Description
Chemical mapping of a 177-nucleotide RNA with DMS.
RNA sequence: GGGAACGACUCGAGUAGAGUCGAAAAUUUUAAAACCAGAGUAGCUGUAUUGGCAGGAGUUAACCGCUUCUGGGGUAUGAAAAUCAAUAGUAUUGUUCUCAAUACCAAUCAUCGUAAUAUCAGUUGCUAAAGUGCUUUCAUUCGUGAAAGCACUUUAAAAAGAAACAACAACAACAAC
Reactivity to DMS in 0.01 (KOAc 150mM, MgCl2 10mM, bicine 150mM(pH8.5), 24C), signal-to-noise 1, nucleotides 027 to 126: u000u000u000u000a140a020a110a170c070c000a250g020a120g030u000a010g000c010u000g020u070a020u000u000g000g000c030a000g020g010a030g000u010u010a100a100c230c230g000c010u010u000c000u000g000g020g000g020u000a020u010g000a020a030a070a020u000c030a010a070u000a080g020u000a300u000u000g030u000u000c060u000c070a080a050u030a050c060c060a090a070u030c220a090u000c110g000u010a010a000u000a020u000c020a040g020u000u000g020c080
Notes:
Conditions: 150 mM KOAc, 10 mM MgCl2 and 150 mM bicine (pH 8.5), 24 C. Values cover nucleotides 27 to 126. For DMS, 573 sequencing reads were counted. Source: RMDB library OK2TST, as collected in RNAgym.